[RMDB]
This 207-nucleotide RNA was probed chemically with 2A3.
RNA sequence: GGGAACGACUCGAGUAGAGUCGAAAAGAAAGAAAGAAAGUUCAUUGUUUAUCGGAAACUUUAAACUAUAACCAUUCAAACUUUUCCAGAAGUUAGUUUGAAUAGAAAUUAAAAAGAAACGUCUGAAUAACCUUAUCAUGCUUCGGCAUGAUAAGAACGCUGAUAUGAAGUUCGCUUCAUAUCAGCGAAAAGAAACAACAACAACAAC
Reactivity to 2A3 in 0.01 (KOAc 150mM, MgCl2 10mM, bicine 150mM(pH8.5), 24C), signal-to-noise 1, nucleotides 027 to 156: g070a030a040a000g030a020a090a040g040a140a060a000g050u040u130c040a060u100u280g080u090u200u060a130u260c080g020g110a150a040a000c000u040u090u000a100a050a040c060u060a040u070a180a040c010c000a000u000u000c000a000a000a000c000u000u000u000u050c050c000a010g010a050a000g000u030u040a000g000u000u000u000g000a000a000u180a160g010a000a070a000u190u240a060a100a000a000a000g000a000a000a000c000g020u000c000u000g060a120a050u050a100a040c010c000u000u000a000u000c000a000u000g000c000u050u030c050g060g000c000a030u000g000a000u000a000a000g000a000a000